[RMDB]
RNA sequence: GGGAACGACUCGAGUAGAGUCGAAAAGGGGGCUUAUAACUGUUCCCAACUACCUAGAACAAGCGCAUCAUAGGUGGACUUACAUUGAUGAUGACCCAUAAUCGAGACCAUACGGUAUUUGUCAGGAGAGUAUACUGCCAUUCGUGGCAGUAUACUCAAAAGAAACAACAACAACAAC
Reactivity to 2A3 in 0.01 (KOAc 150mM, MgCl2 10mM, bicine 150mM(pH8.5), 24C), signal-to-noise 3, nucleotides 027 to 126: g040g010g000g000g020c050u160u100a140u020a300a010c090u100g000u050u020c000c010c000a000a030c010u050a020c000c020u030a020g050a180a000c120a190a010g050c040g030c120a010u000c000a030u050a020g000g050u020g000g050a020c000u020u110a100c010a070u030u060g060a010u080g010a020u060g020a040c000c000c000a030u100a010a030u030c040g010a010g010a060c000c000a060u050a150c080g030g030u130a120u070u060u060g060u030c050a010g000g070a060
Reactivity to DMS in 0.01 (KOAc 150mM, MgCl2 10mM, bicine 150mM(pH8.5), 24C), signal-to-noise 2, nucleotides 027 to 126: g020g040g000g010g000c000u000u010a060u060a060a050c180u000g040u010u000c000c000c000a050a130c110u000a050c050c030u000a050g040a180a210c170a110a100g010c080g050c030a010u000c030a070u010a050g000g020u000g000g000a140c150u030u020a100c020a000u000u130g000a060u000g010a060u000g000a160c020c010c020a010u020a110a070u010c070g000a130g020a100c020c040a050u030a130c110g000g020u000a040u010u010u000g000u000c040a170g020g000a300